Background
Structure probing data (2A3 and DMS) for a 207-nucleotide construct. 2A3 adducts were read by reverse transcription with SuperScript II with manganese. Reactivities are given for positions 27 through 156. The DMS profile rests on 16,898 reads. Source: RMDB library RNAMAK, as collected in RNAgym.
[RMDB]
RNA sequence: GGGAACGACUCGAGUAGAGUCGAAAAGUGAAGUGUUCGCACUUCACCUCACGUCCUAAGUCUUCGAUAAGCACGUAGAGCAUCGAUCUCGGAAACGAGGGAGCUCGAGGUGCUUUUGACGAAGAUAUGGAGAAUUGCUUCAUAUUCGUAUGAAGAAUUACAUGUCCAUAUUCGUAUGGACAUGUAAAAAAGAAACAACAACAACAAC
Reactivity to 2A3 in 0.01 (KOAc 150mM, MgCl2 10mM, bicine 150mM(pH8.5), 24C), signal-to-noise 1, nucleotides 027 to 156: g000u000g000a010a010g020u020g040u120u280c300g050c060a010c000u000u000c010a020c010c000u060c010a180c090g120u010c000c000u050a150a100g060u040c000u000u010c000g100a060u000a150a010g030c040a020c070g030u020a020g000a010g040c000a170u300c050g100a120u020c010u020c010g050g040a080a120a070c020g000a000g000g020g000a040g000c010u000c000g000a000g010g000u000g000c000u000u000u050u000g000a010c000g000a000a010g000a000u000a020u090g040g050a040g070a190a300u230u300g020c010u010u000c000a000u050a040u060u150c250g120u050a010u010g000a000a000g000a040a040
Reactivity to DMS in 0.01 (KOAc 150mM, MgCl2 10mM, bicine 150mM(pH8.5), 24C), signal-to-noise 6, nucleotides 027 to 156: g020u010g010a000a000g030u010g010u000u010c300g040c010a020c010u000u000c010a020c000c030u000c070a090c120g000u000c010c000u000a070a270g010u000c000u000u010c010g020a160u000a040a050g010c010a020c000g000u000a300g010a040g020c000a200u000c150g000a060u010c000u010c000g010g000a160a120a270c010g010a040g010g020g000a050g020c000u000c020g000a180g010g010u000g000c010u000u000u000u000g010a240c100g000a030a020g030a020u000a080u000g000g000a100g020a090a080u000u000g000c010u000u000c020a040u000a120u000u000c190g030u010a060u000g000a060a100g000a100a220